This 177-nucleotide RNA was probed chemically with 2A3 and DMS.
The 2A3 profile rests on 1,852 reads.
Values cover nucleotides 27 to 126.
DMS adducts were read by reverse transcription with MarathonRT.
It was measured as part of the RMDB library 15KREP.
The DMS profile rests on 2,224 reads.
The reactions ran in a buffer of 150 mM KOAc, 10 mM MgCl2 and 150 mM bicine (pH 8.5), at 24 C.

RNA sequence: GGGAACGACUCGAGUAGAGUCGAAAAGGCAAGUGGUAUGAUUUUGGUGACUUCGUAAUCACUCAACCUGGUUCAGGAGUAGCUAUAGUUGAUAGCUACUAUUCUUAUUUGAUGCCUGUGCUCUCAAGCCAUUUAAGAUCUUCGGAUCUUAAAUGGCAAAAGAAACAACAACAACAAC
Reactivity to 2A3 in 0.01 (KOAc 150mM, MgCl2 10mM, bicine 150mM(pH8.5), 24C), signal-to-noise 2, nucleotides 027 to 126: g010g000c000a010a060g100u020g050g030u030a020u060g020a040u040u000u000u020g050g000u000g000a010c010u010u040c130g110u090a060a020u020c000a010c020u170c020a030a070c010c020u120g270g020u150u170c030a010g000g010a010g010u000a000g010c010u000a010u010a040g210u110u170g220a010u010a000g000c000u000a000c000u000a000u020u000c000u020u010a100u040u070u050g070a090u060g000c010c010u030g010u060g000c010u000c000u010c010a020a030
Reactivity to DMS in 0.01 (KOAc 150mM, MgCl2 10mM, bicine 150mM(pH8.5), 24C), signal-to-noise 2, nucleotides 027 to 126: g010g010c030a050a110g020u000g000g010u000a040u000g010a040u000u000u000u000g000g020u000g000a040c090u000u000c300g010u000a110a140u000c010a010c000u020c050a010a060c010c010u000g010g000u000u010c060a020g020g000a020g020u000a000g020c000u000a000u000a180g030u020u000g010a150u000a000g010c010u000a000c000u000a000u000u000c000u000u010a030u000u000u000g000a200u000g000c010c000u010g000u000g000c090u000c010u000c050a080a190